An RNA of 207 nucleotides, treated with 2A3 and DMS and read out base by base. The 2A3 profile rests on 3,914 reads. Values cover nucleotides 27 to 156.

RNA sequence: GGGAACGACUCGAGUAGAGUCGAAAAUAGAACUGCCUAGAACACUAUAGGUAGAGUCAGUUAGGAGACUCUGUGCCUAAGAGAAGCCUAUUCUCCUGUACUAGGCAGUAUAGGGCCAGGAAUAGGCUAUCCUAACUGAGGUGUUCUGUCAUGAUGGACUACUACUCCCAUUCGUGGGAGUAGUAGUAAAAGAAACAACAACAACAAC
Reactivity to 2A3 in 0.01 (KOAc 150mM, MgCl2 10mM, bicine 150mM(pH8.5), 24C), signal-to-noise 5, nucleotides 027 to 156: u180a010g100a070a040c050u040g040c010c020u050a050g040a120a040c070a030c080u130a070u070a210g010g040u040a040g020a010g190u010c000a000g000u020u010a010g020g030a040g020a040c010u010c000u020g070u100g010c030c030u060a030a000g010a000g020a060a000g010c000c000u000a010u010u000c230u080c010c000u000g010u020a010c010u020a040g300g120c100a000g010u000a000u000a000g000g030g030c120c140a040g070g000a000a000u000a000g000g000c010u020a030u020c000c000u010a000a000c000u000g010a010g010g020u030g000u010u030c040u040g080u050c030a060u120g100a100u130g100g040
Reactivity to DMS in 0.01 (KOAc 150mM, MgCl2 10mM, bicine 150mM(pH8.5), 24C), signal-to-noise 3, nucleotides 027 to 156: u000a090g010a110a270c020u000g000c020c010u000a040g010a120a100c040a140c050u000a120u000a030g010g000u000a050g020a170g010u000c000a030g000u000u010a030g000g010a110g000a130c010u000c020u000g000u000g040c040c040u010a130a100g000a090g040a180a080g000c010c020u000a020u000u000c010u000c010c020u000g090u000a030c030u000a170g010g020c200a090g020u000a010u000a010g010g020g010c050c130a120g010g020a030a010u000a000g000g020c010u000a050u000c000c000u000a020a030c020u000g010a040g000g020u000g010u000u000c060u010g010u000c050a140u000g010a170u000g010g010
For DMS the reverse transcriptase was MarathonRT. The reactions ran in a buffer of 150 mM KOAc, 10 mM MgCl2 and 150 mM bicine (pH 8.5), at 24 C.